The data come from the RNA Mapping Database (RMDB), library TTRINS. This 177-nucleotide RNA was probed chemically with DMS. The RNA was probed in 150 mM KOAc, 10 mM MgCl2 and 150 mM bicine (pH 8.5) at 24 C.
RNA sequence: GGGAACGACUCGAGUAGAGUCGAAAAGAUAUGGAGAUGUCGCUGAUGACCACCAGGAAGAAGGGUGUGUGUAUCGGAAACGAUACACACACCUGUAAACUGGUGCAAGGCGACAAUCUCCUAAGUCGACAUUGUACCUCUUCGGAGGUACAAUGUCAAAAGAAACAACAACAACAAC
Reactivity to DMS in 0.01 (KOAc 150mM, MgCl2 10mM, bicine 150mM(pH8.5), 24C), signal-to-noise 1, nucleotides 027 to 126: g000a120u000a300u000g000g000a000g000a030u000g000u000c000g000c000u010g000a130u000g000a200c300c000a000c000c000a050g000g000a000a140g060a300a300g000g000g000u000g030u000g000u000g000u000a000u000c000g000g000a060a060a100c000g040a060u000a000c000a030c000a000c000a010c030c030u010g000u000a000a160a300c000u000g000g000u000g000c020a070a030g000g030c000g010a000c000a000a040u000c000u000c000c000u000a010a060g030u000c120